[RMDB]
RNA sequence: GGGAACGACUCGAGUAGAGUCGAAAAGGAAGCCUGGUUUUCGUUAUUGGUUAGGGAAGAAGGUCCAGCCAAUCCCUGAUGAGCACUGAUAAAAGCCUGGACCGACACAGGAAGGGAAACAAGGUCCUUUCCCUUUCUUCUUGGUCCACCUUGUCAGCUCAUGUAAGAAAUUCGUUUCUUACAUGAGAAAAGAAACAACAACAACAAC
Reactivity to 2A3 in 0.01 (KOAc 150mM, MgCl2 10mM, bicine 150mM(pH8.5), 24C), signal-to-noise 4, nucleotides 027 to 156: g050g020a050a010g040c020c040u090g070g010u040u040u040u060c070g020u080u110a090u100u090g050g030u050u110a170g050g000g050a050a100g040a070a050g110g030u050c030c020a020g020c010c010a030a060u030c020c010c020u020g070a080u080g010a020g040c060a030c080u010g010a010u070a100a190a020a010g010c000c060u030g000g000a000c000c000g030a010c030a000c020a050g010g010a000a010g030g000g010a010a000a020c080a150a130g160g060u120c040c000u010u000u010c000c000c000u000u010u010c000u020u010c020u020u050g000g000u000c010c000a000c010c000u020u030g020u010c010a010g030
Reactivity to DMS in 0.01 (KOAc 150mM, MgCl2 10mM, bicine 150mM(pH8.5), 24C), signal-to-noise 2, nucleotides 027 to 156: g000g000a130a080g020c060c010u010g050g010u000u000u000u000c050g020u000u000a040u010u000g020g020u000u000a120g000g010g030a080a090g020a100a090g030g000u010c030c040a100g000c000c040a090a160u000c020c030c020u000g010a090u000g000a120g010c100a190c000u000g000a080u010a040a080a120a070g030c050c040u010g030g050a050c000c010g020a040c030a050c160a050g000g010a010a030g020g010g000a030a020a020c060a050a140g040g020u000c050c070u000u000u000c000c000c010u000u000u000c000u000u010c050u010u000g040g000u000c020c010a030c030c020u000u000g000u010c000a090g010